RNA sequence: GGGAACGACUCGAGUAGAGUCGAAAAUAUGUCUAUUUUAAUGGGCAGUGUGUUGGAACAACGUGCACAGGUACUGGCUUUGCUAUAGAUGAUAGCACGAUUGUAACUGCUAAACAUCUUUUUGAGUGUGAUGACCUUAAACCAACACAUUUGUCUGGCAAACAAUGCUUUUCGAAGCAUUGUUUGCAAAAGAAACAACAACAACAAC
Reactivity to 2A3 in 0.01 (KOAc 150mM, MgCl2 10mM, bicine 150mM(pH8.5), 24C), signal-to-noise 1, nucleotides 027 to 156: u250a100u050g100u020c000u060a090u010u150u060u140a120a240u220g000g000g000c010a020g000u000g010u000g010u000u000g020g000a170a020c000a000a050c180g140u240g000c060a030c010a070g030g000u060a020c050u030g060g000c000u000u010u170g000c010u070a030u040a250g000a000u030g010a010u030a000g050c010a010c070g020a180u000u270g010u020a090a080c000u000g020c010u010a000a020a030c020a000u070c000u010u040u060u080u190g100a090g010u060g060u110g090a130u070g040a100c000c030u020u050a030a060a140c020c000a040a040c040a000c000a000u150u090u050g000u010c030u010g020

Structure probing data (2A3) for a 207-nucleotide construct. 2A3 is a SHAPE reagent: it acylates the 2'-hydroxyl of flexible nucleotides of all four kinds. For 2A3, 540 sequencing reads were counted. Conditions: 150 mM KOAc, 10 mM MgCl2 and 150 mM bicine (pH 8.5), 24 C.